[RMDB]
RNA sequence: GGGAACGACUCGAGUAGAGUCGAAAAGAAGUUCUUUAUAUCUUUGAAGUAUUGAUUGUACACCUCUAGCUACUUCAUAAUGUUCUUUUCCUACUAUACUAGGGUCAAGAAUCCUUGAUGUAGAUUCCCAUUUAGCGAGCUUCGGCUCGCUAAAUGGAAAAGAAACAACAACAACAAC
Reactivity to 2A3 in 0.01 (KOAc 150mM, MgCl2 10mM, bicine 150mM(pH8.5), 24C), signal-to-noise 3, nucleotides 027 to 126: g010a030a010g040u140u110c060u060u300u150a300u190a080u160c100u080u120u040g030a040a010g010u010a080u140u130g090a090u080u210g110u140a060c100a190c080c020u050c020u000a020g190c040u000a010c000u000u000c010a070u030a170a100u130g110u050u010c000u020u010u000u040c010c000u030a040c000u030a030u010a050c040u030a020g000g040g000u020c050a110a060g090a220a060u000c000c000u020u040g020a070u050g060u020a000g020a160u030u060c000

This 177-nucleotide RNA was probed chemically with 2A3. It was measured as part of the RMDB library OK1LIB. 2A3 adducts were read by reverse transcription with SuperScript II with manganese. The 2A3 profile rests on 847 reads.